[RMDB]
RNA sequence: GGGAACGACUCGAGUAGAGUCGAAAAGAUUAAGUGGGAGCGUCGCCCUAUCGGUGCAUCGGAUAUUAAUUAGCCAGUGCGUGGCACUACGCAUAUUGAUGUCUACUUUGGCGUAGACUCUGCCAAUUUAAGGAUUGGUGGGCAAUCCAGCCCUAGAAUAGGCUAUAUGAUUCGUCAUAUAGCCUAUAAAAGAAACAACAACAACAAC
Reactivity to 2A3 in 0.01 (KOAc 150mM, MgCl2 10mM, bicine 150mM(pH8.5), 24C), signal-to-noise 6, nucleotides 027 to 156: g060a030u150u140a110a040g060u110g020g020g010a050g030c020g030u020c020g020c010c010c020u050a110u120c050g010g000u050g020c020a040u070c050g030g000a020u020a050u130u140a180a080u090u100a030g000c000c020a020g010u000g020c020g020u040g070g000c100a040c110u090a010c030g000c020a010u050a070u070u150g070a060u100g010u000c010u010a040c020u100u100u140g080g000c050g010u000a010g000a020c010u000c010u030g010c000c000a010a020u030u050u090a140a060g120g010a010u000u010g000g000u030g020g000g000c010a020a020u000c010c020a020g010c000c000c000u010a030g050a030
Reactivity to DMS in 0.01 (KOAc 150mM, MgCl2 10mM, bicine 150mM(pH8.5), 24C), signal-to-noise 5, nucleotides 027 to 156: g010a140u000u010a060a120g010u000g010g010g030a090g020c050g030u010c060g010c030c020c030u000a070u000c080g020g030u000g020c040a070u010c020g020g010a060u000a060u000u000a050a130u000u000a250g020c020c030a050g010u000g000c020g030u000g000g030c040a120c030u010a050c050g010c030a170u000a080u000u000g010a080u000g020u000c030u000a060c040u000u000u010g030g030c080g010u000a050g010a040c020u000c020u010g020c010c010a020a030u000u000u000a090a180g030g010a050u000u000g020g030u000g010g030g010c040a090a090u000c070c050a130g010c000c010c010u000a090g010a120
Structure probing data (2A3 and DMS) for a 207-nucleotide construct. The 2A3 profile rests on 7,272 reads. The data come from the RNA Mapping Database (RMDB), library OK3TST. DMS adducts were read by reverse transcription with MarathonRT. Values are in units of 0.01, from 0 to 300, in steps of 10. DMS (dimethyl sulfate) methylates the pairing face of unpaired adenines and cytosines.